[RMDB]
RNA sequence: GGGAACGACUCGAGUAGAGUCGAAAACAUUUGUGCCAGAUCUUGUAGAGCAAGAUGGCCUAUUCAACAAGGGAGAUACUGUUAGCCCUGUGUAUACGGGACAGUCGUGUGCAUGGAAAUGGUACCCUGCAUCCUGUGUUGGAGCUAGCAGCAAGAGUAUGGCAUGGGAUUUCGAUCCCAUGCCAUAAAAAGAAACAACAACAACAAC
Reactivity to 2A3 in 0.01 (KOAc 150mM, MgCl2 10mM, bicine 150mM(pH8.5), 24C), signal-to-noise 1, nucleotides 027 to 156: c060a050u120u090u140g180u200g000c000c000a200g130a250u000c060u000u110g060u230a070g000a070g280c000a000a000g020a010u020g000g000c020c000u160a300u060u270c290a300a220c010a110a000g070g130g000a150g000a080u020a060c000u020g000u010u010a010g010c040c000c000u040g040u020g050u000a000u000a050c000g000g010g010a080c000a090g040u140c000g090u110g000u010g150c000a000u000g070g230a020a140a070u200g000g000u010a010c000c000c000u050g040c040a080u000c000c000u000g040u020g110u230u040g020g000a080g000c000u000a000g000c000a000g000c000a010a010g030a000g020